[RMDB]
RNA sequence: GGGAACGACUCGAGUAGAGUCGAAAAUAUUUUGUGACCCUUGGGAAUCUUGUGGAGCUGUUUCAGGUCCUUGUGAUGCAAGCGGAAGUUCAGCACGAUUCCCAGGACCUGACUUCUCAUCGUUUGCCCGCUUUUACCAGUUCGCUGGUAAAAGCGGAAAAGAAACAACAACAACAAC
Reactivity to 2A3 in 0.01 (KOAc 150mM, MgCl2 10mM, bicine 150mM(pH8.5), 24C), signal-to-noise 2, nucleotides 027 to 126: u140a040u070u170u140u130g260u090g200a240c000c020c000u010u030g000g000g000a020a020u000c010u000u020g010u000g100g010a030g000c010u020g130u260u040u040c130a100g000g150u010c020c030u070u070g090u220g040a110u300g160c010a000a030g020c030g060g090a100a170g000u070u000c020a040g060c000a000c040g000a010u010u000c050c000c000a000g000g000a000c030c040u050g010a000c000u070u070c050u110c000a130u040c040g000u040u000u110g130c070